[RMDB]
RNA sequence: GGGAACGACUCGAGUAGAGUCGAAAAUCACUUAUUUUUUUAAAGGUAAUUCACUAUGUCCGGUAAAAUGACUGGUAUCGUAAAAUGGUUCAACGCUGACAAAGGCUUCGGCUUCAUCACUCCUGACGAGUAGCACUAAGUUCGCUUAGUGCUACUCAAAAGAAACAACAACAACAAC
Reactivity to DMS in 0.01 (KOAc 150mM, MgCl2 10mM, bicine 150mM(pH8.5), 24C), signal-to-noise 2, nucleotides 027 to 126: u020c070a060c100u010u000a000u040u010u020u020u080u020u030a060a030a070g000g010u020a010a040u000u010c040a040c090u030a070u000g020u000c000c050g010g020u020a020a040a120a060u000g020a070c030u010g000g000u000a060u010c080g020u020a020a020a030a050u020g030g020u040u000c040a020a070c070g010c070u000g000a060c090a020a100a090g010g010c020u000u010c060g020g000c010u000u010c060a060u000c080a060c070u000c020c000u010g010a090c180
Reactivity to 2A3 in 0.01 (KOAc 150mM, MgCl2 10mM, bicine 150mM(pH8.5), 24C), signal-to-noise 4, nucleotides 027 to 126: u050c000a040c040u110u080a150u160u060u050u030u010u050u260a110a140a040g030g010u030a020a150u150u100c050a000c100u060a030u130g090u010c010c010g010g000u040a060a110a080a140u090g100a070c020u040g020g010u060a040u100c010g020u010a020a080a040a040u090g020g050u050u060c020a010a030c030g000c040u020g040a040c120a070a070a010g030g000c000u030u020c010g010g000c000u050u040c010a050u020c010a010c030u030c000c010u010g010a020c090
Chemical mapping of a 177-nucleotide RNA with DMS and 2A3.
The reactions ran in a buffer of 150 mM KOAc, 10 mM MgCl2 and 150 mM bicine (pH 8.5), at 24 C.
2A3 adducts were read by reverse transcription with SuperScript II with manganese.
DMS adducts were read by reverse transcription with MarathonRT.
Source: RMDB libraries RFM100 and RFMREP, as collected in RNAgym.